[RMDB]
RNA sequence: GGGAACGACUCGAGUAGAGUCGAAAACUGCCGCCGGGACGCAGUGAUCCUCGCAGGGUCGCACGGUCGCCUCGGGUCGGCCUCGUGUCGGCUCGACCUGCGAGGGGAGCGAGUCGCGAGCCCGACCAAAACUUUCUCGCCUUCGGGCGAGAAAGAACAGGUUGUGACAGUUCGCUGUCACAACCUGAAAAGAAACAACAACAACAAC
Reactivity to 2A3 in 0.01 (KOAc 150mM, MgCl2 10mM, bicine 150mM(pH8.5), 24C), signal-to-noise 1, nucleotides 027 to 156: c080u080g110c030c050g000c020c060g050g000g000a020c000g000c010a060g020u000g010a040u020c010c000u000c000g000c000a020g030g020g060u280c040g010c080a160c120g240g050u240c080g010c020c000u010c020g000g000g050u040c020g010g030c000c050u190c150g240u280g000u060c010g000g000c040u020c000g050a040c040c000u010g000c040g000a000g000g000g000g000a010g010c010g000a050g120u010c000g070c000g000a000g010c020c000c010g030a050c010c000a000a010a000a160c020u000u000u000c000u000c000g000c000c020u120u120c250g070g000g010c000g010a000g000a000a000a000g000a000a000
Record summary: Chemical mapping of a 207-nucleotide RNA with 2A3. For 2A3 the reverse transcriptase was SuperScript II with manganese. The reactions ran in a buffer of 150 mM KOAc, 10 mM MgCl2 and 150 mM bicine (pH 8.5), at 24 C. It was measured as part of the RMDB library M2RFPK. Values cover nucleotides 27 to 156.